Structure probing data (DMS and 2A3) for a 177-nucleotide construct. The reactions ran in a buffer of 150 mM KOAc, 10 mM MgCl2 and 150 mM bicine (pH 8.5), at 24 C.

RNA sequence: GGGAACGACUCGAGUAGAGUCGAAAACAAAAAGCGUCCAGAAGAAAACUGGACGCACAGCCUUGACGACCAGCUAGCUAUGAAAAACGAGGUAAAAGACGUCAAGGCUGAGCUAGCUGGUACAAAACAUCCAUCACACCUUCGGGUGUGAUGGAUGAAAAGAAACAACAACAACAAC
Reactivity to DMS in 0.01 (KOAc 150mM, MgCl2 10mM, bicine 150mM(pH8.5), 24C), signal-to-noise 1, nucleotides 027 to 126: c000a180a130a150a300a070g060c000g070u000c000c000a000g000a160a170g000a170a030a190a030c000u030g000g000a000c000g000c000a040c150a030g000c050c010u050u010g000a130c250g040a070c030c000a030g010c010u000a000g020c000u000a010u000g000a010a030a170a000a000c010g070a040g090g000u010a030a130a130a300g000a070c000g010u000c000a160a010g100g030c080u000g000a010g080c030u000a030g030c000u000g000g030u050a030c010a040a090a050a070
Reactivity to 2A3 in 0.01 (KOAc 150mM, MgCl2 10mM, bicine 150mM(pH8.5), 24C), signal-to-noise 2, nucleotides 027 to 126: c040a000a110a000a000a000g000c020g000u000c000c010a030g010a120a000g110a020a220a040a030c000u010g000g000a000c000g000c000a000c010a000g040c040c040u020u140g060a060c100g080a070c000c040a020g010c000u000a000g050c000u060a030u160g110a140a010a070a000a000c030g010a050g080g000u140a110a110a040a000g150a030c010g000u000c010a010a000g030g000c020u020g000a000g000c000u000a000g060c010u000g000g030u020a050c040a000a070a000a000
For DMS, 894 sequencing reads were counted.
DMS adducts were read by reverse transcription with MarathonRT.